[RMDB]
RNA sequence: GGGAACGACUCGAGUAGAGUCGAAAACGCAUGAUGUGCUCAACUGGAAUUACCAUCUGAACGCGGGAUACCGCAAGUCGAUGAAUUAAUGCUACGUGCAUUACCUCCGCUGUUACUCGUAUCACUGCUUAAAUGAAAGGUUCGCCUUUCAUUUAAGAAAAGAAACAACAACAACAAC
Reactivity to DMS in 0.01 (KOAc 150mM, MgCl2 10mM, bicine 150mM(pH8.5), 24C), signal-to-noise 8, nucleotides 027 to 126: c090g010c070a060u010g010a060u010g010u000g010c060u000c060a070a070c090u000g010g010a100a050u010u000a100c140c010a020u000c020u000g020a080a080c180g010c020g000g010g000a160u020a080c020c030g010c020a050a070g010u000c070g010a040u000g010a080a100u000u000a040a020u000g010c010u000a080c180g010u000g010c000a010u000u000a050c100c020u000c030c030g000c050u000g000u000u000a080c080u000c050g000u000a060u000c040a080c130u000g010
Reactivity to 2A3 in 0.01 (KOAc 150mM, MgCl2 10mM, bicine 150mM(pH8.5), 24C), signal-to-noise 9, nucleotides 027 to 126: c050g020c020a030u060g010a020u060g060u040g020c030u020c070a050a050c050u050g010g040a040a030u070u040a140c040c010a020u000c050u110g040a050a020c040g000c010g010g020g060a110u140a240c010c000g000c010a020a040g110u020c030g020a030u030g030a040a110u100u040a030a010u020g000c010u030a060c190g110u190g030c000a000u010u020a020c000c010u020c010c010g010c050u020g030u060u050a050c020u020c050g020u030a030u080c040a050c120u100g000